[RMDB]
RNA sequence: GGGAACGACUCGAGUAGAGUCGAAAAAAAAAGGAGGAUGAGAAAUAUAGAGAGAGAUCGGUACUCCCACGCGCGUCUCUCACUGAUAAGAGGGAUAAGAGGAUGAAUAUGAGAUAGCGCGCAAAAAUCAGGUAAGAAGAUUCGUCUUCUUACCUGAAAAAGAAACAACAACAACAAC
Reactivity to DMS in 0.01 (KOAc 150mM, MgCl2 10mM, bicine 150mM(pH8.5), 24C), signal-to-noise 3, nucleotides 027 to 126: a040a040a050a040a070g000g020a020g010g010a040u030g010a060g000a090a040a100u000a090u010a060g010a090g000a050g000a020g000a020u000c030g010g000u000a100c090u010c010c010c020a120c130g000c030g010c030g030u000c050u000c000u000c010a070c080u000g000a120u000a070a080g000a050g000g000g000a060u000a020a010g020a090g010g000a040u000g000a070a080u010a060u000g000a060g000a030u000a070g020c030g010c010g010c100a020a010a030a080a060
Reactivity to 2A3 in 0.01 (KOAc 150mM, MgCl2 10mM, bicine 150mM(pH8.5), 24C), signal-to-noise 2, nucleotides 027 to 126: a000a030a000a000a030g050g000a030g000g000a030u040g000a020g050a090a150a010u210a030u090a080g040a000g010a010g000a000g000a040u030c010g010g020u020a040c040u020c020c020c010a020c040g030c000g010c010g030u010c000u000c000u000c010a030c030u020g040a060u050a180a030g020a020g000g030g030a050u070a090a080g070a010g090g020a030u060g050a090a040u170a120u240g020a020g010a020u030a050g010c010g000c000g010c050a030a020a030a000a040